[RMDB]
RNA sequence: GGGAACGACUCGAGUAGAGUCGAAAACUUACAUUGAACGUUAUCUGAAAGAGCGUUUCAAGGGUUAUCUCACUAUUGAGGUAGUAGAUUAUGAAUAUAAAAGUUAUUCGGCUUCUAUCCCUUUCGCUACCGCCUUAGAAUACGCAGAGGAACAACACGUAGUUAACGUUUUCGAACGUUAACUACGAAAAGAAACAACAACAACAAC
Reactivity to DMS in 0.01 (KOAc 150mM, MgCl2 10mM, bicine 150mM(pH8.5), 24C), signal-to-noise 3, nucleotides 027 to 156: c050u010u000a100c030a220u010u000g010a030a040c020g020u000u000a090u010c060u020g020a170a200a260g010a080g000c000g000u000u010u010c030a030a040g010g000g000u000u000a010u010c020u030c030a120c090u010a130u040u010g020a040g020g010u000a010g000u000a060g010a100u000u000a090u020g010a080a110u000a100u010a040a070a070a080g010u000u000a110u000u000c070g040g000c000u010u000c010u000a080u010c020c020c050u010u020u000c010g020c020u000a070c020c020g030c050c020u010u000a080g010a110a110u000a090c090g020c090a100g000a110g000g020a050a080c060a050a070c120a100
Reactivity to 2A3 in 0.01 (KOAc 150mM, MgCl2 10mM, bicine 150mM(pH8.5), 24C), signal-to-noise 7, nucleotides 027 to 156: c020u030u040a050c030a220u020u040g020a010a000c010g020u020u090a120u080c040u100g170a190a220a090g020a080g000c000g020u040u090u100c020a010a010g130g000g000u050u040a040u020c020u030c020a020c060u090a070u110u120g040a060g060g010u000a020g030u010a030g030a080u100u140a100u300g020a070a040u130a020u070a190a190a070a020g020u040u020a150u220u090c030g040g010c010u120u060c020u120a100u110c010c020c000u010u080u010c030g010c010u020a050c010c020g040c010c000u060u060a060g050a160a050u170a130c070g000c100a020g010a020g080g050a080a040c020a020a010c030a040